[RMDB]
RNA sequence: GGGAACGACUCGAGUAGAGUCGAAAAGAUAUGGACCCGAGGUUGAUGGUAGCGACGCGAUAAGCUGGUGUCGGAAACGACACCCAGCUUUUGACGCGUCGCUACCAUCAACGCAGGGUCCUAAGUCGAUACGUUUAAUGUUCGCAUUAAACGUAUCAAAAGAAACAACAACAACAAC
Reactivity to DMS in 0.01 (KOAc 150mM, MgCl2 10mM, bicine 150mM(pH8.5), 24C), signal-to-noise 3, nucleotides 027 to 126: g010a110u000a300u010g010g010a030c000c000c020g000a270g000g010u000u000g000a030u020g010g010u010a010g020c000g010a010c030g010c000g020a140u000a020a010g030c000u000g000g050u010g000u000c000g000g000a130a070a260c010g000a020c000a010c160c100c050a010g010c000u020u000u000u010g010a150c080g040c010g000u000c000g000c000u000a000c000c000a000u000c010a010a000c030g000c030a300g000g000g010u000c000c000u010a000a080g000u000c120
This 177-nucleotide RNA was probed chemically with DMS. Source: RMDB library TTRINS, as collected in RNAgym. Conditions: 150 mM KOAc, 10 mM MgCl2 and 150 mM bicine (pH 8.5), 24 C. The DMS profile rests on 4,222 reads.